[RMDB]
RNA sequence: GGGAACGACUCGAGUAGAGUCGAAAAGUGUCGGUAGUCAUGCGGCUGGCCAGACGGUUCAGUGAAUCCGCAAUCUUCUGGCGCAGAUCAGUGUCGGUAAUGUCGUCAACACCUUUGCGAUAGGUCAAUUACUCAAAAUCUUCGGAUUUUGAGUAAUAAAAGAAACAACAACAACAAC
Reactivity to 2A3 in 0.01 (KOAc 150mM, MgCl2 10mM, bicine 150mM(pH8.5), 24C), signal-to-noise 5, nucleotides 027 to 126: g050u040g030u040c010g020g040u050a040g020u050c040a060u080g010c020g010g000c010u010g030g000c000c010a040g050a070c080g020g000u100u120c030a040g010u030g270a120a080u070c040c030g020c050a010a050u020c010u050u000c000u030g000g000c070g000c100a020g010a090u080c040a040g040u020g060u100c020g000g020u090a110a060u110g030u080c030g020u020c010a030a030c010a050c030c010u040u060u130g060c040g070a090u050a070g050g040u020c010a050
Reactivity to DMS in 0.01 (KOAc 150mM, MgCl2 10mM, bicine 150mM(pH8.5), 24C), signal-to-noise 8, nucleotides 027 to 126: g010u010g010u000c030g010g010u000a050g010u000c060a090u000g020c060g000g010c020u000g010g000c020c010a070g010a060c110g020g010u000u000c040a060g010u000g020a110a110u010c060c030g000c120a040a060u000c030u000u000c020u000g010g010c020g010c060a070g010a090u000c080a080g010u000g010u000c030g010g010u000a060a070u010g010u010c050g020u000c050a060a070c100a070c040c030u000u010u000g010c070g000a110u000a050g000g010u010c130a100
Structure probing data (2A3 and DMS) for a 177-nucleotide construct. It was measured as part of the RMDB library OK2TST. As a SHAPE reagent, 2A3 marks flexible, mostly unpaired nucleotides at the ribose 2'-OH. For 2A3 the reverse transcriptase was SuperScript II with manganese. For DMS, 16,404 sequencing reads were counted. For DMS the reverse transcriptase was MarathonRT.